[RMDB]
RNA sequence: GGGAACGACUCGAGUAGAGUCGAAAAGCGUGCGGGAUGAAGCGUCUUGACGUGUAAACCGCUGUCAGGGGGUCGAACCAAUGAUUGCCCCCAGAGGAAGUGGCGACUAACUCUGUGCCAGCAGUCGGAAAGCAUUAGGGUUCGCCCUAAUGCUUUCAAAAGAAACAACAACAACAAC
Reactivity to DMS in 0.01 (KOAc 150mM, MgCl2 10mM, bicine 150mM(pH8.5), 24C), signal-to-noise 4, nucleotides 027 to 126: g010c070g030u030g000c000g000g000g010a020u050g010a220a300g010c000g000u010c040u010u010g020a020c000g000u000g030u010a020a300a250c010c010g000c000u000g010u020c160a110g000g000g010g010g000u000c040g010a070a260c030c060a080a140u030g000a050u010u000g010c000c050c050c020c000a000g000a020g000g030a150a050g020u000g010g010c170g000a070c030u000a060a240c030u000c040u000g010u010g010c020c140a090g000c040a020g010u000c010g000
Reactivity to 2A3 in 0.01 (KOAc 150mM, MgCl2 10mM, bicine 150mM(pH8.5), 24C), signal-to-noise 4, nucleotides 027 to 126: g090c080g040u050g010c020g000g020g000a080u300g060a130a000g010c020g010u030c060u170u190g160a020c000g000u040g000u050a010a020a000c000c000g000c010u000g060u090c040a080g050g030g000g000g030u090c050g060a030a010c000c020a030a050u190g040a050u020u070g010c020c000c000c000c000a000g000a010g030g010a060a100g050u060g150g040c090g030a030c010u020a060a020c000u010c000u050g030u040g040c000c020a030g000c030a010g070u050c040g060